[RMDB]
RNA sequence: GGGAACGACUCGAGUAGAGUCGAAAACACCACAAGGUUACGCAGAGCUGGCGGAGGGUCAUGGUCCCACUCAUGUCAGGUGCUCUUAAUCUGGCAAGGAAAUGUAACCUACGUGAAUCUCAACAGGGAAAAGGGAGGGUUUCGACCCUCCCUUUUCAAAAGAAACAACAACAACAAC
Reactivity to 2A3 in 0.01 (KOAc 150mM, MgCl2 10mM, bicine 150mM(pH8.5), 24C), signal-to-noise 1, nucleotides 027 to 126: c090a080c060c040a000c010a000a090g040g020u030u010a000c000g000c010a030g010a000g100c040u040g020g090c000g030g020a030g030g030g020u070c060a130u250g120g040u090c030c000c000a090c030u040c010a050u160g010u000c000a010g050g050u010g010c030u030c000u140u130a050a040u030c010u040g020g180c090a000a060g080g010a020a090a000u170g010u010a010a000c000c010u000a030c130g000u010g070a070a110u050c040u020c050a150a190c110a090g130g000
Reactivity to DMS in 0.01 (KOAc 150mM, MgCl2 10mM, bicine 150mM(pH8.5), 24C), signal-to-noise 1, nucleotides 027 to 126: c090a140c100c020a050c130a120a060g020g000u000u010a010c010g020c270a090g010a050g000c040u030g020g000c020g020g010a070g000g000g000u010c030a050u000g020g050u010c050c010c020a160c070u000c020a050u000g020u010c090a070g010g040u010g010c120u030c160u000u000a050a090u000c000u010g000g000c070a060a050g000g010a010a020a070u020g020u000a030a030c010c000u000a030c130g000u010g000a040a130u000c020u000c000a100a130c230a070g010g020